[RMDB]
RNA sequence: GGGAACGACUCGAGUAGAGUCGAAAAGAUAUGGACACGCGAGACUCAACAGCUAUAAGGAUCGGAAACGAUCCAAUAGACAUGAGUCUCGUCCUAAGUCAAACCAUCGAGGUUCGCCUCGAUGGAACAUCCACAUCCGGUUCGCCGGAUGUGGAUGAAAAGAAACAACAACAACAAC
Reactivity to 2A3 in 0.01 (KOAc 150mM, MgCl2 10mM, bicine 150mM(pH8.5), 24C), signal-to-noise 2, nucleotides 027 to 126: g040a020u140a080u200g080g000a020c040a010c200g140c090g020a010g020a010c000u020c000a070a220c050a300g040c010u030a010u040a300a300g000g000a010u000c000g010g000a000a050a060c000g000a000u000c010c000a010a000u000a000g000a020c050a030u060g020a040g000u000c010u010c000g040u000c000c000u080a130a050g040u030c030a050a030a080c010c010a000u000c000g000a000g000g050u140u180c270g180c040c010u000c000g000a000u000g000g010a000a010
Reactivity to DMS in 0.01 (KOAc 150mM, MgCl2 10mM, bicine 150mM(pH8.5), 24C), signal-to-noise 2, nucleotides 027 to 126: g030a080u020a220u010g000g030a090c080a210c280g050c110g000a020g000a000c000u010c000a040a140c270a210g000c010u000a030u010a080a170g000g000a000u030c030g000g000a100a050a210c010g010a000u000c000c000a120a010u010a000g010a030c040a160u000g000a010g000u000c010u000c010g000u010c040c010u000a110a100g000u010c020a060a150a260c000c000a010u000c010g000a010g000g010u000u020c190g010c000c000u000c010g030a000u000g010g000a020a090